[RMDB]
RNA sequence: GGGAACGACUCGAGUAGAGUCGAAAAGGAAAGCGGACAGCAUCAGUAACGAAAGUAUUUAGCGGGCAUGAAAAUGGCAAAUAACGGUCAAACAUCGUGGCGUUGACAAAGAUGGUAAAAGAGAAUAAAUUGCCAGUUAUUGAGCUUCGUGAUCCAAUCGAGUUAGGGAUUUCGAUCCCUAACUCGAAAAAGAAACAACAACAACAAC
Reactivity to 2A3 in 0.01 (KOAc 150mM, MgCl2 10mM, bicine 150mM(pH8.5), 24C), signal-to-noise 1, nucleotides 027 to 156: g040g000a010a040a010g000c000g000g100a090c080a060g000c000a180u000c000a020g000u000a010a010c000g030a140a000a060g140u190a090u070u140u040a030g010c070g000g000g100c000a000u010g070a000a020a110a050u020g030g000c010a150a000a000u300a240a040c070g090g000u000c000a080a080a080c010a070u040c030g100u020g140g030c040g000u060u100g000a000c030a030a160a000g160a010u160g010g000u090a130a030a030a000g140a000g040a030a090u110a140a130a010u160u000g020c000c020a000g010u000u040a040u020u030g000a000g000c000u000u010c010g060u000g000a010u000c000c000a000a010
About this RNA:
This 207-nucleotide RNA was probed chemically with 2A3. Source: RMDB library OK3TST, as collected in RNAgym. The RNA was probed in 150 mM KOAc, 10 mM MgCl2 and 150 mM bicine (pH 8.5) at 24 C. The 2A3 profile rests on 475 reads. For 2A3 the reverse transcriptase was SuperScript II with manganese.